[RMDB]
RNA sequence: GGGAACGACUCGAGUAGAGUCGAAAAGGUGAGGUCAGGGCUCAUCGAAUGCCCGGAGAUCGGCCGCGAUGAGGUCUGCGACAAUGCAUUCCGGGGAGAAGAGGCAGUGCUUCCAUGCGAAUAGCUGCUAGCUCGUUUUAUUCGUAAAACGAGCUAGAAAAGAAACAACAACAACAAC
Reactivity to DMS in 0.01 (KOAc 150mM, MgCl2 10mM, bicine 150mM(pH8.5), 24C), signal-to-noise 3, nucleotides 027 to 126: g000g000u020g000a040g000g000u020c030a110g010g000g000c000u020c030a020u000c020g000a110a100u030g010c130c010c020g000g000a080g000a060u030c070g000g000c070c300g000c080g010a040u010g000a060g000g010u000c000u020g010c070g000a060c120a040a070u020g000c100a080u010u000c040c040g000g030g010g000a070g050a110a090g000a110g000g000c040a060g000u010g000c090u000u010c020c010a060u020g010c030g020a050a070u030a080g030c030u020g010
Reactivity to 2A3 in 0.01 (KOAc 150mM, MgCl2 10mM, bicine 150mM(pH8.5), 24C), signal-to-noise 4, nucleotides 027 to 126: g010g030u090g020a020g000g120u100c060a020g060g030g030c010u020c000a040u010c050g020a130a110u170g030c000c010c010g020g030a120g010a150u210c020g010g000c020c020g050c000g030a050u080g020a020g060g290u010c020u060g010c030g020a050c060a060a100u190g020c000a020u040u030c030c000g030g020g020g020a080g040a080a050g070a040g090g000c080a010g010u020g060c010u070u000c010c000a050u110g010c060g050a060a030u110a150g030c030u030g020
Structure probing data (DMS and 2A3) for a 177-nucleotide construct. 2A3 adducts were read by reverse transcription with SuperScript II with manganese. Values cover nucleotides 27 to 126. The RNA was probed in 150 mM KOAc, 10 mM MgCl2 and 150 mM bicine (pH 8.5) at 24 C. For DMS, 4,989 sequencing reads were counted.